[RMDB]
RNA sequence: GGGAACGACUCGAGUAGAGUCGAAAACGAGACAUCACUCGGAAGCUGUUGCUCCGAAGCAUUCCGGUUCAGUGGUGCAGUUACAUCGGGGAUAGUCAGAAGUGGCCUUGCGCUUCUGAUGAAACUUUAAAGGAUAAGGCAGGAAUUGAUGGCUUUGCCUUGUACUUAUGUUCGCAUAAGUACAAGGAAAAGAAACAACAACAACAAC
Reactivity to 2A3 in 0.01 (KOAc 150mM, MgCl2 10mM, bicine 150mM(pH8.5), 24C), signal-to-noise 8, nucleotides 027 to 156: c040g010a020g060a050c010a030u020c000a010c080u250c030g000g000a000a000g000c010u010g010u100u210g010c010u000c010c000g000a010a000g000c040a230u020u000c010c010g050g010u220u220c090a010g010u010g040g010u030g040c050a020g050u090u180a080c060a120u020c010g000g010g000g010a010u010a020g000u000c000a000g000a000a000g010u010g030g020c010c030u020u070g010c000g000c000u000u000c000u000g000a010u010g000a000a000a010c010u140u200u180a120a110a030g080g020a090u030a080a030g050g010c040a010g050g090a110a100u080u080g040a090u110g130g040c010u050u010u040g030
Reactivity to DMS in 0.01 (KOAc 150mM, MgCl2 10mM, bicine 150mM(pH8.5), 24C), signal-to-noise 3, nucleotides 027 to 156: c010g000a100g010a240c040a050u000c040a080c020u000c010g060g000a040a100g010c010u010g010u000u010g030c040u000c040c100g020a080a080g020c060a140u000u000c010c000g010g010u000u020c160a120g030u000g000g070u010g010c030a080g030u010u000a100c090a080u000c070g010g000g020g000a110u000a200g000u010c000a030g010a030a020g040u000g020g000c060c090u000u010g030c040g030c010u000u010c040u000g040a020u010g000a110a080a080c110u000u000u000a060a060a110g000g010a130u000a050a050g010g030c020a080g000g040a110a100u000u010g000a130u000g030g010c020u000u000u000g010

Chemical mapping of a 207-nucleotide RNA with 2A3 and DMS. The reactions ran in a buffer of 150 mM KOAc, 10 mM MgCl2 and 150 mM bicine (pH 8.5), at 24 C. Source: RMDB library RSTRND, as collected in RNAgym. Values cover nucleotides 27 to 156. Reactivities are rounded to 0.1 and cut off at 0 and 3.